[RMDB]
An RNA of 177 nucleotides, treated with 2A3 and read out base by base. Reactivities are given for positions 27 through 126. The 2A3 profile rests on 237 reads. The reactions ran in a buffer of 150 mM KOAc, 10 mM MgCl2 and 150 mM bicine (pH 8.5), at 24 C. 2A3 adducts were read by reverse transcription with SuperScript II with manganese.
RNA sequence: GGGAACGACUCGAGUAGAGUCGAAAAGAAGCAGCUGGUUACAAACCAGGUGAAGAAGUAUUCUUAGGAUUUGACUGUGCAUCAUCAGAAUUCUAUGAAAAUGGUGUAUAUGACUACAGUAAGUUCGACACAGGGUCGCUUUCGAGCGACCCUGUGUAAAAGAAACAACAACAACAAC
Reactivity to 2A3 in 0.01 (KOAc 150mM, MgCl2 10mM, bicine 150mM(pH8.5), 24C), signal-to-noise 1, nucleotides 027 to 126: g000a000a160g040c100a000g000c000u090g160g050u230u300a030c240a090a030a000c000c000a050g000g000u030g000a030a100g000a030a000g000u020a190u100u000c030u030u100a140g000g000a000u000u000u000g100a100c000u000g000u000g000c000a000u000c000a000u000c000a210g120a170a090u220u000c160u260a280u300g000a010a010a010a010u030g020g000u120g030u140a100u000a000u160g000a160c000u100a000c050a100g000u100a090a000g170u160u000c000g030